Record summary: The data come from the RNA Mapping Database (RMDB), library OK3TST. This 207-nucleotide RNA was probed chemically with 2A3 and DMS. For DMS, 1,363 sequencing reads were counted. The RNA was probed in 150 mM KOAc, 10 mM MgCl2 and 150 mM bicine (pH 8.5) at 24 C.
RNA sequence: GGGAACGACUCGAGUAGAGUCGAAAAUUGCUCACUGUGGCUCCUGGCCCAUCUCCUUUCUGCUCCUUGAAGGUGCCAAUAAAAGUUGAAAGAAACAGUUCAUUCAGGACAUUGUAGAAAAAUGGUGAUGAUUCGAUUUCAUCCCAAGACAAUCAGAUAACCAGAAGUUGUUCGCAACUUCUGGUUAAAAAGAAACAACAACAACAAC
Reactivity to 2A3 in 0.01 (KOAc 150mM, MgCl2 10mM, bicine 150mM(pH8.5), 24C), signal-to-noise 2, nucleotides 027 to 156: u110u070g000c010u090c010a100c110u060g020u070g040g040c020u040c120c030u070g050g000c000c000c000a100u040c030u100c000c000u000u150u050c020u010g010c000u050c000c010u010u080g040a030a010g020g030u080g000c030c020a110a020u160a110a050a050a040g040u030u040g100a150a080a000g000a000a120a000c020a030g300u300u050c010a030u110u160c010a070g020g000a020c000a030u060u160g010u170a050g070a060a070a020a000a030u060g010g060u150g000a000u020g000a000u120u070c080g060a080u070u090u000c000a030u010c000c000c000a000a000g110a030c030a030a090u140c250a170g060a070
Reactivity to DMS in 0.01 (KOAc 150mM, MgCl2 10mM, bicine 150mM(pH8.5), 24C), signal-to-noise 1, nucleotides 027 to 156: u000u000g010c030u000c090a120c120u000g020u000g020g040c000u010c030c050u040g050g000c040c040c040a200u040c040u010c000c010u000u000u000c080u000g040c000u000c090c010u000u010g000a080a120g000g030u000g000c050c010a010a160u000a090a110a220a040g020u000u020g010a090a030a030g010a140a050a040c040a060g010u010u000c040a140u000u000c100a220g050g050a110c050a050u000u000g030u010a060g000a040a010a060a140a120u000g040g040u000g020a100u000g010a090u000u000c120g000a290u030u020u000c010a000u000c010c000c010a030a100g010a110c030a070a100u000c080a120g000a300